[RMDB]
RNA sequence: GGGAACGACUCGAGUAGAGUCGAAAAGUCGCCGCGUCUACAUCAACGCCCAGCGCGGGCGAGGGAGGCGUCCUACGGGGGUGGCCCAUUCGCCGGCAUGGCAGAGGACGGCAAGAUUGCCGCGACGAUGACUCCGUAUCUUCGGAUACGGAGUCAUAAAAGAAACAACAACAACAAC
Reactivity to 2A3 in 0.01 (KOAc 150mM, MgCl2 10mM, bicine 150mM(pH8.5), 24C), signal-to-noise 1, nucleotides 027 to 126: g000u010c000g000c000c010g010c020g000u000c030u090a030c030a110u060c050a030a080c040g000c020c000c010a080g060c300g070c160g230g010g000c010g000a000g060g050g000a220g000g000c020g030u030c010c010u060a130c200g260g000g000g000g020u070g250g020c030c000c000a060u070u020c010g020c000c000g040g060c040a050u020g070g000c010a020g030a020g100g050a080c010g050g000c020a010a010g030a030u150u300g010c010c000g000c000g020a000c000g010
Reactivity to DMS in 0.01 (KOAc 150mM, MgCl2 10mM, bicine 150mM(pH8.5), 24C), signal-to-noise 1, nucleotides 027 to 126: g000u000c010g000c030c190g000c030g000u000c010u010a120c080a120u000c060a100a140c140g000c010c030c090a120g010c080g020c120g000g000g010c030g020a030g000g000g060a100g010g020c020g020u000c040c000u000a250c130g030g000g010g000g010u010g010g000c020c000c010a270u030u010c040g000c020c030g000g060c010a070u000g010g010c040a110g020a180g010g010a010c000g010g000c070a140a080g010a010u000u010g040c040c250g000c020g000a030c130g000